[RMDB]
The record gives the reactivity of an RNA of 207 nucleotides to 2A3. For 2A3 the reverse transcriptase was SuperScript II with manganese. The 2A3 profile rests on 635 reads.
RNA sequence: GGGAACGACUCGAGUAGAGUCGAAAAGGGAAUGGUGGUUUACCCCGUUAUCAAAUGAUUACCGACCAAUAAUUUGCGAAACUCGUUUCGCGUUGGCUGCCUAAUUCAAGGAAUUAGCGUGCCUUCAAAGACAUCAAGAAGUUCGCUUCUUGAUGAACACAUCUGCAAGCUUCGGCUUGCAGAUGUGAAAAGAAACAACAACAACAAC
Reactivity to 2A3 in 0.01 (KOAc 150mM, MgCl2 10mM, bicine 150mM(pH8.5), 24C), signal-to-noise 1, nucleotides 027 to 156: g060g020g030a050a020u060g010g000u050g030g000u050u030u160a120c000c000c010c000g050u080u060a190u020c070a020a020a150u250g010a080u110u070a050c040c030g090a080c000c050a060a020u170a120a040u120u130u180g000c010g000a020a020a010c100u060c140g070u000u030u010c000g000c010g000u010u000g030g010c060u160g040c000c020u010a030a000u010u000c060a160a160g130g010a100a000u000u010a020g000c010g090u030g030c000c000u000u010c020a080a040a010g050a020c010a000u000c010a010a000g000a010a000g020u030u050c150g050c060u000u000c000u000u000g000a000u000g000a000a010